[RMDB]
RNA sequence: GGGAACGACUCGAGUAGAGUCGAAAAGAAAGAAAUCGAGAGACUAGCAAUAUCCGUAAAAGCGGAUUAGAUCGAAUAACUCGUUCUUGAUCUAACUGAGGGAUGAGUUUCUAGUCUAAUCGAGAAAGGGUAUCUAUGUCUUCGGACAUAGAUACCCAAAAGAAACAACAACAACAAC
Reactivity to DMS in 0.01 (KOAc 150mM, MgCl2 10mM, bicine 150mM(pH8.5), 24C), signal-to-noise 2, nucleotides 027 to 126: g060a110a030a080g020a090a150a080u000c000g000a040g000a110g000a000c000u000a050g040c240a080a000u040a010u000c000c060g000u050a160a200a080a180g020c250g000g000a030u000u000a060g020a050u000c290g000a070a140u000a080a020c120u010c130g000u000u000c000u000u000g010a110u000c020u000a080a110c160u020g000a040g000g020g000a000u020g000a050g010u000u030u000c000u000a000g000u020c000u000a010a030u000c000g010a020g000a000a060a050
Reactivity to 2A3 in 0.01 (KOAc 150mM, MgCl2 10mM, bicine 150mM(pH8.5), 24C), signal-to-noise 3, nucleotides 027 to 126: g190a000a140a030g060a000a080a020u010c000g010a000g000a000g000a020c000u000a000g000c010a000a150u040a010u300c030c020g110u190a030a060a050a070g110c000g020g000a010u020u000a000g020a020u130c100g040a020a060u090a150a050c030u020c030g030u060u000c000u040u180g080a140u010c020u080a070a170c030u090g050a100g010g050g040a000u030g010a000g100u000u000u000c000u000a000g040u000c020u030a070a100u020c030g000a020g030a100a010a010

An RNA of 177 nucleotides, treated with DMS and 2A3 and read out base by base. Conditions: 150 mM KOAc, 10 mM MgCl2 and 150 mM bicine (pH 8.5), 24 C. As a SHAPE reagent, 2A3 marks flexible, mostly unpaired nucleotides at the ribose 2'-OH. For DMS, 1,444 sequencing reads were counted.